[RMDB]
RNA sequence: GGGAACGACUCGAGUAGAGUCGAAAAGAUAUGGAUCGCUACCCACCAGUAGAGAGCUGUGAACUACUUUCAGGUGUCGGAAACGACACGCAGAAGCACAGCUCUCUACUGAGGCGAUCCUAAGUCACCCAUGAUUAGUCUUCGGACUAAUCAUGGGAAAAGAAACAACAACAACAAC
Reactivity to DMS in 0.01 (KOAc 150mM, MgCl2 10mM, bicine 150mM(pH8.5), 24C), signal-to-noise 1, nucleotides 027 to 126: g000a040u000a300u000g000g030a000u000c010g000c010u000a100c040c050c060a300c100c000a000g050u000a000g000a030g000a000g050c000u010g000u030g000a060a030c110u010a300c030u000u000u000c080a300g000g010u000g000u040c010g020g020a130a050a300c040g040a000c000a000c000g040c110a200g000a000a000g000c010a080c000a000g000c000u000c000u000c000u000a000c000u000g000a060g010g000c000g000a000u000c010c000u000a000a080g000u000c090a200